[RMDB]
RNA sequence: GGGAACGACUCGAGUAGAGUCGAAAAAGCGUAGCGGUAAGCCGCUACGCAAGGCGCAUUUGAACUGUAUUGUACGCCUUGCAUAAAGCAAAAGUACUAAAAAAACGUGCCGUUACGACGGCACGAAAAAACAUCCAUUGGUUCGCCAAUGGAUGAACAUGUCCACUAAGUUCGCUUAGUGGACAUGAAAAGAAACAACAACAACAAC
Reactivity to 2A3 in 0.01 (KOAc 150mM, MgCl2 10mM, bicine 150mM(pH8.5), 24C), signal-to-noise 5, nucleotides 027 to 156: a000g010c010g000u000a020g000c000g000g030u090a140a050g160c010c000g010c010u000a000c000g000c000a000a000g020g000c020g000c030a070u060u130u270g080a150a070c090u090g030u190a120u180u130g030u030a020c020g010c000c000u000u000g020c040a080u120a210a120a030g020c040a030a010a010a000g040u040a050c110u210a030a030a030a020a010a050a030c010g010u000g000c000c000g000u020u020a060c260g020a000c030g040g000c000a000c000g000a000a000a000a000a000a000c010a000u000c000c000a000u000u010g010g000u030u030c150g020c070c000a000a000u000g000g000a000u000g000a010a000
Reactivity to DMS in 0.01 (KOAc 150mM, MgCl2 10mM, bicine 150mM(pH8.5), 24C), signal-to-noise 2, nucleotides 027 to 156: a100g050c010g000u000a050g010c040g030g010u000a130a140g040c040c000g000c040u000a020c020g010c000a000a000g000g000c000g030c020a070u010u000u000g010a070a200c160u000g010u000a300u010u000g070u000a010c000g000c000c010u020u000g000c040a160u000a030a160a220g050c050a100a050a130a150g000u010a100c040u020a000a010a110a090a060a050a190c030g000u000g020c010c000g050u000u000a120c120g000a140c020g010g000c000a010c000g000a000a010a020a160a040a060c030a010u010c030c010a030u010u000g000g010u000u010c300g000c000c000a000a010u000g000g010a000u000g000a020a050
An RNA of 207 nucleotides, treated with 2A3 and DMS and read out base by base. For DMS, 3,113 sequencing reads were counted. The RNA was probed in 150 mM KOAc, 10 mM MgCl2 and 150 mM bicine (pH 8.5) at 24 C. Values cover nucleotides 27 to 156.